[RMDB]
RNA sequence: GGGAACGACUCGAGUAGAGUCGAAAAAGUUUGAGGUCGAACAUGCAUUGCAUUUCAAAUUCGAUUCGAGUUCUUCAAUCAGAAAAGUAAAUUAAGGAGAAGAAGAAAUCGGUAUCACAUUUUAAAAGCAUAAGGACCUGUUCGCAGGUCCUUAUGCAAAAGAAACAACAACAACAAC
Reactivity to 2A3 in 0.01 (KOAc 150mM, MgCl2 10mM, bicine 150mM(pH8.5), 24C), signal-to-noise 2, nucleotides 027 to 126: a000g200u080u090u060g060a030g100g010u000c000g000a000a000c040a050u090g000c070a040u000u270g010c000a000u110u080u030c040a050a050a050u210u210c020g000a000u000u000c000g000a000g030u000u000c000u000u000c060a000a000u120c000a010g280a030a090a050a050g150u230a220a270a090u240u100a100a070g100g000a000g000a300a000g000a000a000g000a000a130a000u000c000g090g000u180a080u040c000a000c030a180u000u000u040u280a210a300a030a000
The record gives the reactivity of an RNA of 177 nucleotides to 2A3. The RNA was probed in 150 mM KOAc, 10 mM MgCl2 and 150 mM bicine (pH 8.5) at 24 C. The 2A3 profile rests on 554 reads.